[RMDB]
RNA sequence: GGGAACGACUCGAGUAGAGUCGAAAAGAUAUGGAACUCAGGACAUGUCGCUACAUCGGAAACGAUGUAGUCGACAACAGCCUGAAGUUCCUAAGUCAAAACCAAGGGAACGUUCGCGUUCCCUUGGGUUACCCUAGGGGUUCGCCCCUAGGGUAACAAAAGAAACAACAACAACAAC
Reactivity to 2A3 in 0.01 (KOAc 150mM, MgCl2 10mM, bicine 150mM(pH8.5), 24C), signal-to-noise 4, nucleotides 027 to 126: g010a000u020a000u040g000g000a000a000c000u000c010a000g030g000a040c230a300u300g020u010c000g010c000u000a000c000a010u000c000g020g000a040a010a010c010g020a000u010g000u010a000g000u120c010g000a000c000a030a010c000a030g020c000c000u010g020a010a010g000u000u000c010c000u000a010a010g010u000c010a020a050a130a200c010c000a000a000g010g000g000a010a020c030g010u090u090c300g050c010g160u000u010c050c000c000u000u000g000g000
Reactivity to DMS in 0.01 (KOAc 150mM, MgCl2 10mM, bicine 150mM(pH8.5), 24C), signal-to-noise 5, nucleotides 027 to 126: g000a000u000a040u010g000g000a010a000c000u000c000a000g010g000a020c010a300u000g030u000c000g010c010u000a010c000a000u000c010g020g010a030a010a030c010g020a010u000g010u000a000g010u010c010g040a010c000a070a030c160a150g000c000c000u000g000a030a050g010u000u000c000c000u000a000a070g000u000c000a150a090a170a300c000c000a010a000g000g000g000a010a000c000g020u000u000c270g020c000g010u000u000c000c000c000u000u010g000g000

An RNA of 177 nucleotides, treated with 2A3 and DMS and read out base by base. Reactivities are given for positions 27 through 126. It was measured as part of the RMDB library TTRDES. For DMS the reverse transcriptase was MarathonRT. For DMS, 7,679 sequencing reads were counted. The reactions ran in a buffer of 150 mM KOAc, 10 mM MgCl2 and 150 mM bicine (pH 8.5), at 24 C.